[RMDB]
RNA sequence: GGGAACGACUCGAGUAGAGUCGAAAAUAGAGGUAUGAGGAUUGCCUCACUAACCCCAAGGUGAGGCUGCCAACCGAGCACAUGCCACGGUGGCCGAAUCUUAAUGAGAUUCCAUACGUUGGAUUAAGUUAUGCUGUUAGUUCGCUAACAGCAUAACAAAAGAAACAACAACAACAAC
Reactivity to DMS in 0.01 (KOAc 150mM, MgCl2 10mM, bicine 150mM(pH8.5), 24C), signal-to-noise 3, nucleotides 027 to 126: u010a120g030a100g010g010u010a010u010g010a080g000g000a120u010u010g000c010c000u000c000a000c010u020a080a130c080c010c000c050a200a300g000g000u010g010a030g000g030c010u000g000c000c000a020a030c000c020g000a300g030c000a220c260a050u010g000c010c010a010c010g000g010u000g000g000c080c250g010a010a010u000c030u000u000a050a130u020g010a050g000a010u000u000c000c000a010u000a050c030g000u010u000g010g010a140u010u010a070a230
Reactivity to 2A3 in 0.01 (KOAc 150mM, MgCl2 10mM, bicine 150mM(pH8.5), 24C), signal-to-noise 2, nucleotides 027 to 126: u180a040g060a050g060g050u000a040u040g020a050g060g060a060u020u220g000c020c000u000c000a010c020u010a000a180c000c000c010c020a040a000g010g020u000g000a000g000g080c020u000g030c000c030a020a020c000c000g000a000g020c010a080c060a270u300g000c020c010a080c040g000g000u020g000g000c000c000g020a000a000u000c010u130u240a130a090u250g090a070g010a060u000u000c010c010a000u020a020c070g110u060u060g080g050a120u110u130a110a010